[RMDB]
RNA sequence: GGGAACGACUCGAGUAGAGUCGAAAAGGCAACAUGAAAGGACACGUGCAAGACCUGAAAAGGUCACUUGUAGGGCACGCAGACGCAAGCAAAAAGCACGUUCAAGACUUGAAAUAGCUUUGAAGUUCAAUGUUUAGGAGUUCGCUCCUAAACAUUGAAAAGAAACAACAACAACAAC
Reactivity to DMS in 0.01 (KOAc 150mM, MgCl2 10mM, bicine 150mM(pH8.5), 24C), signal-to-noise 2, nucleotides 027 to 126: g000g030c030a070a120c150a030u000g010a210a090a060g010g000a080c100a070c030g030u000g030c020a110a060g000a010c000c000u030g020a140a030a110a020g000g030u000c050a110c100u010u000g010u000a160g000g010g020c080a050c090g000c160a110g010a070c130g000c040a030a050g040c030a000a060a080a140a140g000c000a000c000g020u000u000c050a070a090g010a060c080u030u010g020a110a090a060u000a130g010c030u000u000u000g000a080a090g010u010u000
Reactivity to 2A3 in 0.01 (KOAc 150mM, MgCl2 10mM, bicine 150mM(pH8.5), 24C), signal-to-noise 1, nucleotides 027 to 126: g010g000c010a040a000c020a110u090g060a100a010a000g080g010a020c020a000c080g000u000g000c040a070a020g000a020c000c020u020g040a040a060a000a000g000g010u040c000a000c020u010u020g020u080a210g050g070g000c060a030c070g040c010a030g030a020c040g020c020a020a010g000c030a030a030a030a020a050g000c010a010c030g000u040u050c020a010a030g030a050c030u010u010g050a000a110a000u080a040g020c000u120u030u100g070a090a020g010u030u020
This 177-nucleotide RNA was probed chemically with DMS and 2A3. Values cover nucleotides 27 to 126. The RNA was probed in 150 mM KOAc, 10 mM MgCl2 and 150 mM bicine (pH 8.5) at 24 C. For 2A3, 1,629 sequencing reads were counted. DMS adducts were read by reverse transcription with MarathonRT. Values are in units of 0.01, from 0 to 300, in steps of 10.